Overview: Structure probing data (DMS and 2A3) for a 177-nucleotide construct. The data come from the RNA Mapping Database (RMDB), libraries RFM100 and RFMREP. DMS adducts were read by reverse transcription with MarathonRT. The RNA was probed in 150 mM KOAc, 10 mM MgCl2 and 150 mM bicine (pH 8.5) at 24 C.
RNA sequence: GGGAACGACUCGAGUAGAGUCGAAAAGAAGGACGUAGGAGGCUGCGAUAAGCCUCGGGGAGCUGUCAACCGAGCUGAGAUCCGAGGAUGUCCGAAUGGGGAAACCCAGCCACAGUGAUGUGUGGUUGGGCUACCUAUGGUUCGCCAUAGGUAGCCCAAAAGAAACAACAACAACAAC
Reactivity to DMS in 0.01 (KOAc 150mM, MgCl2 10mM, bicine 150mM(pH8.5), 24C), signal-to-noise 1, nucleotides 027 to 126: g060a120a200g000g000a040c030g010u000a040g040g000a080g010g010c000u010g000c030g000a030u000a060a200g010c000c000u000c000g020g000g010g000a000g030c000u000g010u000c040a090a300c050c120g020a020g060c010u000g000a230g000a030u000c000c010g040a060g010g000a020u000g000u000c010c040g000a010a080u010g010g000g000g000a090a120a130c020c000c010a020g000c000c000a010c000a000g000u020g020a190u020g030u000g020u000g030g030u000u020
Reactivity to 2A3 in 0.01 (KOAc 150mM, MgCl2 10mM, bicine 150mM(pH8.5), 24C), signal-to-noise 1, nucleotides 027 to 126: g020a050a060g000g000a000c000g000u000a000g010g080a080g000g000c060u050g000c040g060a050u000a050a000g010c000c000u000c000g000g000g000g000a030g000c000u000g020u110c060a100a170c130c020g030a000g000c000u170g200a000g000a000u000c000c000g000a000g000g000a000u040g020u080c020c020g020a040a010u040g050g000g000g010a000a000a040c000c000c000a000g060c000c000a000c000a040g030u060g270a120u100g070u000g010u000g090g000u000u010